[RMDB]
RNA sequence: GGGAACGACUCGAGUAGAGUCGAAAAGAUAUGGAUGCAUGCAUGGGAGCUCCACAUCGGAAACGAUGUGCGAGCGACGAUCAUGCCAUGCAUCCUAAGUCAAAAGGGCUCCCUUCGGGGAGCCCAAGAAUGUUGGUUUGUUCGCAAACCAACAUUCAAAAGAAACAACAACAACAAC
Reactivity to DMS in 0.01 (KOAc 150mM, MgCl2 10mM, bicine 150mM(pH8.5), 24C), signal-to-noise 1, nucleotides 027 to 126: g000a030u020a300u010g000g020a000u000g010c010a000u000g000c010a010u000g010g000g040a070g020c020u010c000c000a020c010a000u010c000g010g010a120a060a140c000g000a010u000g000u020g010c200g000a010g020c000g000a010c240g000a040u010c010a010u000g010c160c080a020u000g000c000a000u000c010c010u000a000a140g000u020c070a080a050a230a170g010g000g000c000u000c000c000c000u010u000c210g030g010g010g030a010g020c000c010c020a020a010